[RMDB]
RNA sequence: GGGAACGACUCGAGUAGAGUCGAAAAGUGCCGGCAAUACAGUGUGUAUGGAGGUCUCAAUGGCUCGGAAGUGCCAGCAAACCGGCGUAGAUAUUAGCAGACGUAUGGGCGUAAGACUUUUAGUGAAAAAAGUACAUAAGCUUCGGCUUAUGUACAACACUUUUAGUCUCUUCGGAGACUAAAAGUGAAAAGAAACAACAACAACAAC
Reactivity to DMS in 0.01 (KOAc 150mM, MgCl2 10mM, bicine 150mM(pH8.5), 24C), signal-to-noise 2, nucleotides 027 to 156: g010u000g020c000c010g020g040c020a130a120u010a070c020a130g010u000g040u000g030u010a090u010g030g010a100g000g040u000c070u010c040a060a110u010g020g040c010u020c040g040g020a180a140g040u000g010c000c020a070g000c080a020a160a040c020c030g030g010c010g020u010a070g010a130u010a120u000u000a090g010c060a050g010a050c060g010u000a090u000g030g010g010c050g030u000a080a090g010a060c040u000u000u000u010a110g000u000g000a010a050a030a100a090a160g040u000a010c000a030u000a000a010g040c000u000u000c300g070g010c010u000u010a020u000g010u000a030c010a040a130
Reactivity to 2A3 in 0.01 (KOAc 150mM, MgCl2 10mM, bicine 150mM(pH8.5), 24C), signal-to-noise 3, nucleotides 027 to 156: g050u020g000c000c020g020g020c030a030a050u110a070c050a060g070u040g010u020g010u190a060u090g060g020a030g030g060u020c040u000c060a070a170u080g030g000c030u020c050g000g020a110a040g030u040g050c020c010a020g040c080a090a040a070c010c010g020g000c000g030u050a030g030a080u070a040u150u140a050g010c040a020g010a070c030g070u080a070u090g020g010g010c040g030u050a060a010g030a020c010u020u070u030u270a100g050u090g060a060a000a020a000a030a030g000u000a000c000a000u000a000a000g010c020u010u040c160g030g010c000u000u000a000u000g000u000a000c000a000a000
Conditions: 150 mM KOAc, 10 mM MgCl2 and 150 mM bicine (pH 8.5), 24 C. An RNA of 207 nucleotides, treated with DMS and 2A3 and read out base by base. Values are in units of 0.01, from 0 to 300, in steps of 10. The DMS profile rests on 3,829 reads. For DMS the reverse transcriptase was MarathonRT. Reactivities are given for positions 27 through 156.